The data come from the RNA Mapping Database (RMDB), library VIROID. The record gives the reactivity of an RNA of 177 nucleotides to 2A3 and DMS. For 2A3, 2,515 sequencing reads were counted. Reactivities are rounded to 0.1 and cut off at 0 and 3. High 2A3 reactivity points to a flexible backbone, as in loops and unpaired stretches. Conditions: 150 mM KOAc, 10 mM MgCl2 and 150 mM bicine (pH 8.5), 24 C.
RNA sequence: GGGAACGACUCGAGUAGAGUCGAAAAUUGAGGAGGAAAACCCAUGGCUGGGUAACGUUCUUGGAAUUGUCCGCCAGAAGGCAGGAGGAUCCGACGCUCCCCAGGCCAAGAAAAGACGCCUUGGCGACCAAUGUUUUUAGUUCGCUAAAAACAUUGGAAAAGAAACAACAACAACAAC
Reactivity to 2A3 in 0.01 (KOAc 150mM, MgCl2 10mM, bicine 150mM(pH8.5), 24C), signal-to-noise 2, nucleotides 027 to 126: u100u070g020a030g030g020a050g010g040a040a050a060a060c030c000c030a110u050g030g000c020u030g020g000g000u010a020a000c010g030u070u010c070u130u120g060g020a170a100u050u050g110u170c010c010g020c010c010a120g120a300a120g070g000c070a070g020g000a000g020g020a010u000c000c010g000a010c020g030c000u030c020c000c000c030a000g130g010c010c010a010a000g040a010a080a000a010g070a030c040g020c020c000u020u040g090g030c010g010a030
Reactivity to DMS in 0.01 (KOAc 150mM, MgCl2 10mM, bicine 150mM(pH8.5), 24C), signal-to-noise 2, nucleotides 027 to 126: u020u010g010a060g010g020a040g010g000a090a070a050a060c010c010c020a140u000g000g020c040u010g000g000g020u000a020a030c020g000u000u000c060u010u010g020g000a110a050u000u000g010u000c020c020g000c020c010a200g010a110a090g030g030c010a050g070g000a080g000g000a050u000c020c000g000a040c030g000c030u000c050c020c000c030a030g000g010c000c010a030a050g000a040a080a080a090g020a210c180g010c040c000u000u000g020g000c050g000a190